Chemical mapping of a 177-nucleotide RNA with DMS. The data come from the RNA Mapping Database (RMDB), library M2PK50. Values cover nucleotides 27 to 126. For DMS the reverse transcriptase was MarathonRT. Reactivities are rounded to 0.1 and cut off at 0 and 3.
RNA sequence: GGGAACGACUCGAGUAGAGUCGAAAAUCAGGACUGUUCGCAGUCCUGAAAACCCAGACCCGAAUCCACCCAUCGACUCUAGGACGGAACCCAGCCUGGGAAAAAGGAGGGUGUUCGCACCCUCCAACACAUCAGCGAAGUUCGCUUCGCUGAUGUGAAAAGAAACAACAACAACAAC
Reactivity to DMS in 0.01 (KOAc 150mM, MgCl2 10mM, bicine 150mM(pH8.5), 24C), signal-to-noise 1, nucleotides 027 to 126: u000c000a000g000g010a020c000u000g030u000u010c170g040c010a000g000u010c000c000u000g000a010a030a120a090c040c030c020a120g000a090c040c000c010g020a150a120u000c030c030a020c020c010c040a100u000c060g000a030c020u010c040u000a000g010g010a130c050g020g000a140a090c020c010c010a120g000c040c010u000g020g020g000a090a040a080a150a070g020g010a030g010g020g010u000g020u010u010c190g000c010a000c000c000c000u000c000c010a020a040